Annotation:
Chemical mapping of a 177-nucleotide RNA with 2A3 and DMS. For 2A3 the reverse transcriptase was SuperScript II with manganese. Reactivities are rounded to 0.1 and cut off at 0 and 3. The DMS profile rests on 9,461 reads. The 2A3 profile rests on 24,282 reads. It was measured as part of the RMDB library TTRDES.
RNA sequence: GGGAACGACUCGAGUAGAGUCGAAAAGAUAUGGACGCUAAUGAGGGAGCCUGGGUUCGGAAACGAACCACAGGCGAGGAUCUCAUAGCGUCCUAAGUCAAAAUCCCAGACGCUUCGGCGUCUGGGAGGUAAUGUACAAGUUCGCUUGUACAUUACCAAAAGAAACAACAACAACAAC
Reactivity to 2A3 in 0.01 (KOAc 150mM, MgCl2 10mM, bicine 150mM(pH8.5), 24C), signal-to-noise 6, nucleotides 027 to 126: g010a010u030a020u090g000g000a000c000g000c010u070a300a250u130g000a010g030g110g070a160g020c000c010u010g010g000g000u000u000c000g000g000a040a020a010c000g000a000a020c030c070a190c010a080g000g000c000g010a010g000g030a160u030c000u000c010a020u010a000g000c000g000u010c000c000u000a000a000g000u010c000a010a020a010a280u040c000c010c000a000g000a000c000g000c030u090u150c300g180g000c000g000u000c000u000g010g010g000a000
Reactivity to DMS in 0.01 (KOAc 150mM, MgCl2 10mM, bicine 150mM(pH8.5), 24C), signal-to-noise 4, nucleotides 027 to 126: g000a030u000a180u000g010g010a010c000g030c000u000a050a080u010g010a020g020g000g010a200g010c010c000u000g000g000g010u000u000c000g020g010a030a030a080c000g000a000a000c000c000a040c000a010g010g010c000g010a050g000g020a140u000c000u000c000a030u000a010g000c010g020u000c010c000u000a000a060g000u000c020a120a080a140a290u000c000c000c000a000g000a000c000g010c000u000u000c240g030g020c000g010u000c000u000g000g000g010a000